[RMDB]
RNA sequence: GGGAACGACUCGAGUAGAGUCGAAAAGUUAGGCGAGGCUCCUAUACAAACACAGGUUCCUGAUCUGACGACGUCGAGAGACGCCCAAGAUUAGGACAGGAUAUAUCGAACCAAGGUAUAUCCCCAUAAAACUCGGAACACUUCGGUGUUCCGAGAACCGAUACAAUAACUUCGGUUAUUGUAUCGGAAAAGAAACAACAACAACAAC
Reactivity to 2A3 in 0.01 (KOAc 150mM, MgCl2 10mM, bicine 150mM(pH8.5), 24C), signal-to-noise 4, nucleotides 027 to 156: g030u040u020a020g000g040c130g070a130g120g020c110u090c030c010u070a080u080a150c100a030a170a000c110a010c040a130g140g050u150u020c000c000u010g010a010u000c010u060g000a030c030g010a010c000g000u000c000g010a020g000a010g010a140c000g000c010c000c000a000a000g000a000u000u010a010g010g000a000c010a000g000g000a000u000a000u000a000u000c010g030a050a080c060c030a110a030g000g000u000a000u000a000u000c000c000c010c000a100u250a070a150a050a050c000u000c010g000g000a000a000c000a000c000u020u060c190g070g000u000g000u000u000c000c000g000a000g000a000a000
Reactivity to DMS in 0.01 (KOAc 150mM, MgCl2 10mM, bicine 150mM(pH8.5), 24C), signal-to-noise 2, nucleotides 027 to 156: g030u000u010a020g030g030c000g000a260g010g000c130u020c010c020u030a080u000a140c120a030a040a070c080a100c070a070g000g000u000u000c010c000u000g000a020u000c010u010g000a160c120g030a010c030g000u000c000g000a300g010a300g010a030c000g000c000c000c040a220a030g000a020u000u020a000g000g010a030c140a060g000g020a010u000a020u000a010u000c010g010a120a300c080c030a180a100g010g000u000a010u000a010u000c000c000c000c020a030u000a020a070a030a110c000u000c010g030g020a020a030c000a010c010u000u000c300g070g030u000g050u000u010c000c000g020a010g000a020a050

Conditions: 150 mM KOAc, 10 mM MgCl2 and 150 mM bicine (pH 8.5), 24 C. Structure probing data (2A3 and DMS) for a 207-nucleotide construct. 2A3 adducts were read by reverse transcription with SuperScript II with manganese. In probing experiments dimethyl sulfate is read out at A N1 and C N3, which are open when not base-paired.